An RNA of 207 nucleotides, treated with 2A3 and DMS and read out base by base. It was measured as part of the RMDB library RNAMAK. For DMS, 4,550 sequencing reads were counted. 2A3 is a SHAPE reagent: it acylates the 2'-hydroxyl of flexible nucleotides of all four kinds.
RNA sequence: GGGAACGACUCGAGUAGAGUCGAAAAGGGAGCUUCGGCUCCCGUUUACCGUAGGACUGAGAGGAGCUCGGACGAAGAACUUUAUUUCGAAAGAGAUAAAGGGAGUCCGAGAACUACUCUGAUCAGUCCUAAACGGCAUAAGCGCAUUCGUGCGCAAUAAUUACCGUAUAUUCGUAUACGGUAAUUAAAAAGAAACAACAACAACAAC
Reactivity to 2A3 in 0.01 (KOAc 150mM, MgCl2 10mM, bicine 150mM(pH8.5), 24C), signal-to-noise 1, nucleotides 027 to 156: g010g010g020a010g000c020u100u130c230g120g000c000u020c050c010c000g000u010u040u050a020c000c000g010u000a000g010g010a000c000u000g000a000g010a010g000g050a000g020c010u000c000g010g000a000c010g090a160a080g010a050a020c000u000u000u000a000u010u000u010c010g020a030a030a010g000a010g000a000u000a000a000a000g000g020g000a020g000u010c000c030g000a000g000a010a000c010u070a000c010u000c000u000g010a000u020c000a000g010u000c010c000u000a000a000a000c000g020g000c060a070u080a300a080g000c000g000c010a020u050u050c150g170u050g000c010g000c000a000a050
Reactivity to DMS in 0.01 (KOAc 150mM, MgCl2 10mM, bicine 150mM(pH8.5), 24C), signal-to-noise 2, nucleotides 027 to 156: g000g000g020a010g020c010u010u030c290g070g000c000u010c000c000c000g000u000u010u000a000c000c020g050u000a070g010g000a040c010u030g000a040g000a300g010g010a080g010c030u010c010g010g020a020c010g000a140a250g010a130a120c010u010u000u000a000u010u000u000c020g000a230a130a300g020a030g020a010u000a010a010a020g010g020g000a180g010u000c000c000g000a050g000a020a080c040u010a240c020u000c010u000g040a300u000c020a010g020u010c000c000u000a000a020a070c020g000g050c000a070u010a060a120g050c000g010c000a090u000u000c300g000u000g010c000g010c020a050a080